[RMDB]
RNA sequence: GGGAACGACUCGAGUAGAGUCGAAAACCCCGCAUAGUUCGCUAUGCGGGGAAAUCUAGUUCUCACGAACUAGGCUAAGUUAUGGCGUGCUUUCAGCACUAAACUGGUCUCCGUUCGCGGAGACCAGCAUUGGUACCCUGUUCGCAGGGUACCAAUGAAAAGAAACAACAACAACAAC
Reactivity to DMS in 0.01 (KOAc 150mM, MgCl2 10mM, bicine 150mM(pH8.5), 24C), signal-to-noise 3, nucleotides 027 to 126: c010c000c000c010g030c010a000u000a000g010u000u000c220g020c020u000a010u000g010c000g010g010g010g010a000a010a040u000c000u000a000g000u000u000c010u010c300a190c300g020a000a010c000u010a000g000g040c140u000a070a110g000u010u000a070u000g010g000c090g020u000g000c000u000u000u000c200a100g020c070a030c020u000a050a070a230c010u000g000g010u000c000u000c000c000g000u000u020c170g020c010g000g010a000g010a000c000c000a010g010
Reactivity to 2A3 in 0.01 (KOAc 150mM, MgCl2 10mM, bicine 150mM(pH8.5), 24C), signal-to-noise 2, nucleotides 027 to 126: c000c000c000c010g000c000a020u000a000g000u030u050c130g040c120u000a000u000g000c000g030g000g010g000a030a000a000u040c010u010a010g010u000u010c060u040c030a010c100g000a010a000c000u010a000g030g000c040u130a180a070g140u190u180a150u280g150g030c090g000u020g030c000u070u300u280c140a010g000c010a020c030u060a060a120a020c000u010g000g000u000c000u030c010c010g020u040u070c280g020c020g070g000a000g020a000c000c000a000g000